[RMDB]
RNA sequence: GGGAACGACUCGAGUAGAGUCGAAAAUGUUCUUAUCAGUUUAAUAUCUGAUACGUCCUCUAUCAGAGGACAAUAUAUUAAAUGGAUUUUUGGAAUUAGGAGUUGGAAUAGGAGCUUGCUCCGUCCACAUGUGCUGAAGGUUCGCCUUCAGCACAUGAAAAGAAACAACAACAACAAC
Reactivity to DMS in 0.01 (KOAc 150mM, MgCl2 10mM, bicine 150mM(pH8.5), 24C), signal-to-noise 1, nucleotides 027 to 126: u010g020u000u000c000u010u000a020u000c000a120g000u000u000u000a010a020u000a010u000c140u010g020a090u000a080c230g010u000c000c000u000c000u000a150u010c300a170g000a030g000g000a010c010a000a000u010a020u020a020u010u000a030a010a050u030g000g000a090u000u000u000u000u000g000g000a050a110u000u010a070g020g010a090g000u000u000g000g000a030a030u000a110g020g040a110g000c010u010u010g000c010u010c000c000g000u000c000c010a130
Chemical mapping of a 177-nucleotide RNA with DMS.
DMS adducts were read by reverse transcription with MarathonRT.
Conditions: 150 mM KOAc, 10 mM MgCl2 and 150 mM bicine (pH 8.5), 24 C.
Values cover nucleotides 27 to 126.